The record gives the reactivity of an RNA of 177 nucleotides to DMS and 2A3. 2A3 adducts were read by reverse transcription with SuperScript II with manganese. The DMS profile rests on 20,252 reads. As a SHAPE reagent, 2A3 marks flexible, mostly unpaired nucleotides at the ribose 2'-OH.
RNA sequence: GGGAACGACUCGAGUAGAGUCGAAAAAUCGCGUUGAGGCGGUUGAGGGAGUUGAUCGACCGCUACCCCCUGCGUGGCAUCAAGGGCCCGAUGGGCACCGGUCAGGACAUGCUCGAUCUGCUGGGCGUACGUUAUACUUCUUCGGAAGUAUAACGUAAAAAGAAACAACAACAACAAC
Reactivity to DMS in 0.01 (KOAc 150mM, MgCl2 10mM, bicine 150mM(pH8.5), 24C), signal-to-noise 9, nucleotides 027 to 126: a070u010c040g010c040g010u010u000g010a150g010g020c030g010g000u000u000g010a060g020g010g010a110g020u000u010g010a150u010c050g000a050c020c020g010c040u000a120c050c030c010c070c080u000g010c040g020u010g010g010c050a070u010c130a080a140g010g010g010c010c010c020g000a080u010g010g010g010c040a050c180c010g000g000u010c050a070g000g000a070c080a050u000g000c030u000c020g000a060u000c040u010g020c040u000g000g000g000c060g010
Reactivity to 2A3 in 0.01 (KOAc 150mM, MgCl2 10mM, bicine 150mM(pH8.5), 24C), signal-to-noise 4, nucleotides 027 to 126: a000u040c010g000c030g050u050u120g150a080g060g020c040g020g010u020u020g010a060g030g100g040a150g040u090u090g120a190u060c050g020a010c000c010g000c000u060a080c010c010c000c000c010u020g060c040g050u120g020g000c020a040u060c090a210a160g110g040g000c000c000c000g100a150u210g000g020g000c030a030c010c030g000g010u040c040a050g080g000a020c010a030u170g010c020u030c040g030a070u000c040u090g000c000u050g060g040g000c010g020